[RMDB]
RNA sequence: GGGAACGACUCGAGUAGAGUCGAAAAGAUAUGGAUUAUUACCAGGGAGCUGAAUGUCGGAAACGACAUUACAGCUUUGAUCUGGACGAUAAUCCUAAGUCAAAACAGUGACGUUCGCGUCACUGAAGCAAUAUGUACCGUUCGCGGUACAUAUUGCAAAAGAAACAACAACAACAAC
Reactivity to 2A3 in 0.01 (KOAc 150mM, MgCl2 10mM, bicine 150mM(pH8.5), 24C), signal-to-noise 2, nucleotides 027 to 126: g010a000u060a040u140g000g000a000u000u010a000u030u090a100c000c010a000g020g010g020a010g000c010u030g000a020a010u000g000u010c000g020g000a090a050a050c010g010a000c020a020u000u000a080c000a000g000c030u010u010u000g000a010u000c000u040g110g120a300c140g040a050u040a040a000u000c010c000u020a160a020g050u040c040a000a010a140a160c000a000g000u000g010a020c020g010u040u080c300g030c020g130u010c000a000c010u000g010a040a010
Reactivity to DMS in 0.01 (KOAc 150mM, MgCl2 10mM, bicine 150mM(pH8.5), 24C), signal-to-noise 3, nucleotides 027 to 126: g010a030u000a300u000g000g000a010u000u000a000u000u000a220c000c000a020g000g000g000a000g010c000u000g000a090a000u010g000u000c000g000g000a120a080a300c030g010a000c000a000u010u010a080c000a000g000c000u020u000u010g010a050u010c010u000g020g000a110c190g000a010u000a010a000u000c000c000u000a020a180g010u000c030a180a060a150a230c010a000g010u000g000a030c000g010u000u010c300g010c030g020u000c000a010c000u000g010a060a140
This 177-nucleotide RNA was probed chemically with 2A3 and DMS. For DMS, 2,620 sequencing reads were counted. It was measured as part of the RMDB library TTRDES. For 2A3, 4,924 sequencing reads were counted. The reactions ran in a buffer of 150 mM KOAc, 10 mM MgCl2 and 150 mM bicine (pH 8.5), at 24 C.